[RMDB]
RNA sequence: GGGAACGACUCGAGUAGAGUCGAAAACCUUCCCCCCUGCGGGGCUUCCCCAUAAGAUGGCAGGAACCCACUCAUUGGGGUCCGCUGUUCCAUUCUUUCUUACCUUGUGGCCGGCAUGGUCCCAGCCUAACUCCCGCGUUCGCGCGGGAGAAAAGAAACAACAACAACAAC
Reactivity to 2A3 in 0.01 (KOAc 150mM, MgCl2 10mM, bicine 150mM(pH8.5), 24C), signal-to-noise 2, nucleotides 027 to 129: c000c000u040u060c000c000c000c000c000c000u030g020c070g010g020g000g000c000u060u070c020c000c010c000a000u000a070a020g040a060u040g050g000c040a080g130g000a020a030c020c000c030a070c020u180c110a160u090u160g000g000g000g010u000c000c020g010c060u000g050u130u010c010c000a020u060u160c020u020u110u000c000u040u080a060c000c000u020u070g020u020g050g040c010c080g040g060c030a010u000g030g000u020c020c040c000a000g030c000c000u060a050a070
Reactivity to DMS in 0.01 (KOAc 150mM, MgCl2 10mM, bicine 150mM(pH8.5), 24C), signal-to-noise 2, nucleotides 027 to 129: c000c010u000u060c000c010c000c000c000c120u040g040c070g000g010g000g060c080u010u050c070c000c000c060a150u120a080a080g020a060u050g000g000c060a070g030g030a100a000c030c000c000a080c180u070c030a210u050u020g000g000g030g110u080c000c000g000c080u020g080u030u000c010c050a050u060u060c050u040u050u020c020u020u050a030c170c040u000u000g040u020g070g070c080c070g000g000c060a040u030g040g040u000c010c050c000a100g000c000c000u050a080a140